[RMDB]
RNA sequence: GGGAACGACUCGAGUAGAGUCGAAAAGCGAAGCAGUCUUACGGGUUCGCCGUCGCGUCGGUGCUACCAACGCGCGGCCAGGUGGUGGGCGUGGCGCACCCCGUGGUGGUGACGUUCAGUGCGCCGACUCCCAUGGGCGGUUCGCCGCCCAUGGGAGAAAAGAAACAACAACAACAAC
Reactivity to 2A3 in 0.01 (KOAc 150mM, MgCl2 10mM, bicine 150mM(pH8.5), 24C), signal-to-noise 1, nucleotides 027 to 126: g050c020g020a000a000g010c070a000g020u070c030u040u120a020c030g170g000g000u040u080c060g000c060c020g110u180c080g000c030g010u010c000g020g050u070g300c130u110a070c020c010a050a020c030g050c010g000c010g030g070c020c010a040g020g000u040g030g030u060g000g000g020c090g090u140g020g050c030g030c010a000c050c020c000c010g110u050g000g080u130g000g020u070g030a070c020g020u060u080c070a000g030u010g070c030g000c030c000g000a050
Reactivity to DMS in 0.01 (KOAc 150mM, MgCl2 10mM, bicine 150mM(pH8.5), 24C), signal-to-noise 1, nucleotides 027 to 126: g020c030g010a070a100g020c070a110g010u010c070u000u010a060c090g000g010g010u000u010c130g020c000c030g010u010c070g010c010g030u000c010g000g010u000g030c130u090a040c030c040a030a030c000g040c000g020c010g010g000c020c060a020g000g020u000g010g030u010g000g010g060c050g030u010g010g020c030g010c010a050c030c060c030c040g010u010g020g030u000g030g010u010g000a070c040g010u000u010c170a090g010u010g000c030g000c000c020g010a140
This 177-nucleotide RNA was probed chemically with 2A3 and DMS.
For DMS, 1,355 sequencing reads were counted.
Values cover nucleotides 27 to 126.
The data come from the RNA Mapping Database (RMDB), library OK2TST.